[RMDB]
RNA sequence: GGGAACGACUCGAGUAGAGUCGAAAAGAAAGCGUCAUUCGUCGAAUGAGAAGAUAAUGACGCAAAGAAAAACGUGGGCAACCUUCUCAGCGCACGACAAGAAAUCUCAUUCGCAGAAAUAAGAAAAGAUUACUGAUAAUUUCGAUUAUCAGUAAUCAAAAGAAACAACAACAACAAC
Reactivity to DMS in 0.01 (KOAc 150mM, MgCl2 10mM, bicine 150mM(pH8.5), 24C), signal-to-noise 4, nucleotides 027 to 126: g020a100a100a150g010c030g000u000c020a000u000u020c230g050u040c000g000a050a020u000g000a050g020a080a080g000a100u030a050a050u000g000a020c000g000c000a050a050a130g000a040a040a040a050a110c030g000u000g010g000g030c010a080a060c130c100u000u000c020u000c000a190g000c000g000c010a010c010g000a200c160a110a120g000a080a110a110u000c000u000c020a030u000u000c000g030c210a200g000a050a060a090u070a050a100g020a100a050a090a100
Reactivity to 2A3 in 0.01 (KOAc 150mM, MgCl2 10mM, bicine 150mM(pH8.5), 24C), signal-to-noise 9, nucleotides 027 to 126: g080a010a070a000g000c000g000u010c010a010u090u100c070g150u050c010g070a010a020u050g010a020g010a080a010g040a090u140a070a020u040g000a000c000g000c010a040a060a020g050a010a120a020a000a010c020g000u020g000g160g000c020a070a070c020c010u120u040c080u020c030a010g000c060g050c020a010c010g070a030c080a040a070g090a110a100a050u010c010u000c000a010u020u010c010g000c010a020g150a100a130a060u300a160a010g080a040a060a020a000
Chemical mapping of a 177-nucleotide RNA with DMS and 2A3. The 2A3 profile rests on 16,544 reads. Values cover nucleotides 27 to 126. For 2A3 the reverse transcriptase was SuperScript II with manganese. It was measured as part of the RMDB library OK1LIB. DMS adducts were read by reverse transcription with MarathonRT.